[RMDB]
Structure probing data (DMS and 2A3) for a 207-nucleotide construct.
For DMS the reverse transcriptase was MarathonRT.
For DMS, 8,325 sequencing reads were counted.
Conditions: 150 mM KOAc, 10 mM MgCl2 and 150 mM bicine (pH 8.5), 24 C.

RNA sequence: GGGAACGACUCGAGUAGAGUCGAAAAUCGAUAUCAAUGGUUACUUUGAAGGACGUACACCACUUCAUUGCGCUAUACAACAUAACUUCACUCAGAUUGCUAAGUACUUAUUAGAUCGAGGAGCUGAUAUAUCAUUAAAGACAGACGAUGGUAAAACAGUCUAAUACUACUUCGGUAGUAUUAGACUAAAAGAAACAACAACAACAAC
Reactivity to DMS in 0.01 (KOAc 150mM, MgCl2 10mM, bicine 150mM(pH8.5), 24C), signal-to-noise 4, nucleotides 027 to 156: u000c050g020a130u010a080u010c060a110a080u010g010g000u010u000a090c050u000u000u000g000a040a060g000g000a130c080g030u000a140c070a080c020c070a030c300u000u000c030a080u010u000g020c070g020c040u000a130u000a090c040a080a090c050a070u010a060a070c050u000u000c040a090c030u000c040a100g020a100u000u000g000c060u000a070a080g000u000a080c080u010u000a080u000u010a060g010a060u000c060g030a080g020g020a120g050c030u000g010a070u000a070u000a060u010c020a060u000u010a040a070a150g010a090c070a090g010a070c080g010a060u000g020g030u010a030a050a060a130c140
Reactivity to 2A3 in 0.01 (KOAc 150mM, MgCl2 10mM, bicine 150mM(pH8.5), 24C), signal-to-noise 8, nucleotides 027 to 156: u080c020g010a020u040a020u120c070a060a060u070g040g030u080u050a100c010u070u060u080g040a040a010g040g030a020c060g050u130a040c080a050c080c010a050c160u030u020c030a040u030u110g020c040g000c060u070a030u050a210c070a130a000c020a110u130a090a080c030u090u080c060a030c060u040c020a040g020a160u040u070g020c010u020a040a030g050u030a090c050u070u080a080u110u050a080g030a070u060c030g010a010g000g030a010g030c020u010g060a000u020a000u010a010u140c020a010u010u150a110a080a010g050a030c020a020g020a010c050g030a040u070g030g030u060a060a070a030a050c060